[RMDB]
Chemical mapping of a 177-nucleotide RNA with DMS.
Reactivities are given for positions 27 through 126.
The reactions ran in a buffer of 150 mM KOAc, 10 mM MgCl2 and 150 mM bicine (pH 8.5), at 24 C.
RNA sequence: GGGAACGACUCGAGUAGAGUCGAAAAGAAGACAUUGUACAUGUAGCUGAAGUCUGUUUAGAUAACACUGCGAUCCGUUUAAAUGCUUCUGAUUUCAACACAGAACUGUACACAAGUGAUUAUCACACCGGCGAUAAAUCUUCGGAUUUAUCGCCGGAAAAGAAACAACAACAACAAC
Reactivity to DMS in 0.01 (KOAc 150mM, MgCl2 10mM, bicine 150mM(pH8.5), 24C), signal-to-noise 1, nucleotides 027 to 126: g040a020a080g050a110c030a020u000u000g030u000a070c090a150u000g010u000a040g000c030u000g000a000a300g030u000c000u000g010u000u050u010a070g050a160u010a030a170c050a000c150u000g050c060g000a010u020c220c160g000u010u010u000a030a070a000u000g000c050u000u000c010u000g000a130u010u000u010c070a050a050c200a010c080a100g010a110a060c050u000g000u000a000c060a100c110a030a060g000u000g000a080u030u000a070u010c110a000c080a200
For DMS the reverse transcriptase was MarathonRT. Source: RMDB library OK2TST, as collected in RNAgym.